[RMDB]
RNA sequence: GGGAACGACUCGAGUAGAGUCGAAAAAUGUAGAUGCUACAUAGUUGGUUCUCAUCCUUCAGAGACUACGAGUGUAAUAAGAGCAUCCGUCGACAAAAGGAUCACCCUAAGAUGAUCAUCUCGUGGCUAUUGAGAACGAAUUAAAUCAGAUGGUUCUGCAUCUGAUCUCGUUCGCGAGAUCAGAUGCAAAAGAAACAACAACAACAAC
Reactivity to 2A3 in 0.01 (KOAc 150mM, MgCl2 10mM, bicine 150mM(pH8.5), 24C), signal-to-noise 2, nucleotides 027 to 156: a000u050g020u000a020g040a140u090g040c020u080a050c020a010u050a110g100u050u070g110g000u050u070c040u040c020a100u160c000c000u030u140c090a060g040a040g030a160c040u000a020c010g000a010g050u020g000u080a060a140u070a190a020g080a020g040c030a000u000c000c000g070u060c010g030a070c100a090a180a020a000g050g040a100u060c010a080c020c010c000u020a000a120g000a110u030g000a000u030c000a010u020c000u000c000g000u010g000g000c020u060a120u160u080g000a000g000a020a000c000g010a110a010u170u100a110a060a130u080c050a070g070a140u110g040g010u070u020c000u000

An RNA of 207 nucleotides, treated with 2A3 and read out base by base. Values cover nucleotides 27 to 156.